Background:
The record gives the reactivity of an RNA of 177 nucleotides to 2A3 and DMS. The RNA was probed in 150 mM KOAc, 10 mM MgCl2 and 150 mM bicine (pH 8.5) at 24 C. High 2A3 reactivity points to a flexible backbone, as in loops and unpaired stretches. DMS adducts were read by reverse transcription with MarathonRT. The 2A3 profile rests on 7,713 reads. It was measured as part of the RMDB library TTRDES.
[RMDB]
RNA sequence: GGGAACGACUCGAGUAGAGUCGAAAAGAUAUGGAAUUACAAGGGAGCGAUAUCUCGGAAACGAGAUUUCGCGAAGAACUUGCGAUUCCUAAGUCAAAACGAGCUAAUUCUUCGGAAUUAGCUCGAAGAAUCACUACAUCUUCGGAUGUAGUGAUUCAAAAGAAACAACAACAACAAC
Reactivity to 2A3 in 0.01 (KOAc 150mM, MgCl2 10mM, bicine 150mM(pH8.5), 24C), signal-to-noise 2, nucleotides 027 to 126: g000a010u010a010u060g000g000a000a000u030u010a030c010a010a010g020g030g010a230g080c000g000a000u000a010u030c000u000c010g000g000a020a010a000c010g000a000g000a000u030u010u010c010g000c030g030a010a060g030a000a010c010u010u010g020c050g030a020u010u010c000c000u010a020a000g010u010c010a020a020a070a190c030g010a000g000c000u010a000a020u010u020c010u060u160c300g040g000a000a000u030u000a000g010c010u010c010g000a000a000
Reactivity to DMS in 0.01 (KOAc 150mM, MgCl2 10mM, bicine 150mM(pH8.5), 24C), signal-to-noise 3, nucleotides 027 to 126: g010a010u000a100u030g000g010a020a000u000u000a080c000a000a020g010g010g000a090g020c000g010a020u000a010u000c000u000c000g020g000a030a030a070c000g010a010g000a020u000u000u010c000g050c000g000a060a070g000a210a300c000u000u000g000c020g000a000u000u000c000c000u000a000a140g000u010c000a080a100a140a260c000g010a010g000c000u000a000a020u000u000c000u000u020c270g030g000a010a000u000u000a010g000c000u000c010g010a050a060